The record gives the reactivity of an RNA of 207 nucleotides to DMS and 2A3.
For 2A3 the reverse transcriptase was SuperScript II with manganese.
The RNA was probed in 150 mM KOAc, 10 mM MgCl2 and 150 mM bicine (pH 8.5) at 24 C.
Reactivities are rounded to 0.1 and cut off at 0 and 3.
RNA sequence: GGGAACGACUCGAGUAGAGUCGAAAACUCAUUUUCGAAUGAGAUGUCGCGUACUACAUAACGGCACUUGGACCUUUGCUCCCCACCGAGCUCCCAAAUAGGAGCUCGAGGCAAAGCUAGUGCAGUUAUGUAUCGCCCUUACUGUGUUCGCACAGAAACGUUAACUAGCUUUCGAGCUAGUUAACGUAAAAGAAACAACAACAACAAC
Reactivity to DMS in 0.01 (KOAc 150mM, MgCl2 10mM, bicine 150mM(pH8.5), 24C), signal-to-noise 2, nucleotides 027 to 156: c010u000c000a000u010u000u010u000c210g010a060a020u000g010a020g040a110u010g020u000c040g000c020g000u000a150c050u010a020c010a020u010a020a010c020g000g020c000a010c010u010u010g050g000a120c250c010u000u000u000g000c020u000c220c110c030c040a300c230c000g010a000g000c000u010c010c000c010a030a140a190u010a040g010g020a030g010c000u010c000g010a070g010g000c020a030a020a030g020c030u000a000g030u000g010c010a000g010u010u020a000u000g000u010a010u000c070g040c000c040c020u010u020a080c020u020g030u000g010u010u020c190g070c040a040c020a040g000a040a150
Reactivity to 2A3 in 0.01 (KOAc 150mM, MgCl2 10mM, bicine 150mM(pH8.5), 24C), signal-to-noise 4, nucleotides 027 to 156: c000u000c000a010u030u040u060u130c210g160a040a000u020g010a050g070a090u140g120u300c080g000c030g050u090a130c050u000a010c010a010u000a000a010c010g020g000c000a010c010u050u130g130g140a190c030c000u000u000u000g010c010u110c030c060c010c010a030c030c000g000a000g000c000u010c000c010c030a170a300a110u300a110g000g000a000g000c000u000c000g000a010g000g010c000a000a000a000g000c010u010a000g000u010g000c020a010g010u010u000a010u010g010u000a020u140c010g000c000c020c000u080u190a130c000u020g000u000g060u110u060c210g080c090a010c010a020g050a160a090